This 177-nucleotide RNA was probed chemically with 2A3 and DMS. The RNA was probed in 150 mM KOAc, 10 mM MgCl2 and 150 mM bicine (pH 8.5) at 24 C. The DMS profile rests on 1,866 reads.
RNA sequence: GGGAACGACUCGAGUAGAGUCGAAAAAAGGCUUUGUUUCUGAUGAAGGAUUGUGGGAUUGUUGCUUAACACUGAUGAGCAUAUUAUUGGUUCAAUUCUGGUGUUGAGAUAGUUGACACUUCUUAUAUAAUUAUCAAGGCUUCGGCCUUGAUAAUUAAAAAGAAACAACAACAACAAC
Reactivity to 2A3 in 0.01 (KOAc 150mM, MgCl2 10mM, bicine 150mM(pH8.5), 24C), signal-to-noise 2, nucleotides 027 to 126: a000a000g150g020c170u130u000u000g040u030u030u000c010u070g100a100u120g060a120a020g040g000a050u070u170g010u090g000g050g020a120u050u060g010u040u050g040c000u020u020a000a000c000a000c010u040g010a080u000g010a000g000c000a040u010a060u260u160a090u130u180g010g000u010u020c010a070a080u090u000c200u220g070g000u000g000u000u000g000a010g000a010u040a000g030u000u030g000a000c010a000c030u000u000c000u030u020a070u000a010
Reactivity to DMS in 0.01 (KOAc 150mM, MgCl2 10mM, bicine 150mM(pH8.5), 24C), signal-to-noise 1, nucleotides 027 to 126: a070a050g020g010c060u000u000u000g010u000u000u000c010u000g030a080u010g020a180a020g000g010a020u000u010g020u010g010g000g000a040u000u030g010u030u000g020c010u010u010a040a050c020a040c080u030g040a020u040g010a000g020c010a040u000a130u070u080a060u030u050g000g030u040u000c030a020a100u020u000c070u050g000g020u000g000u000u000g010a020g030a240u020a100g000u020u000g010a080c130a050c100u000u000c010u000u030a040u000a190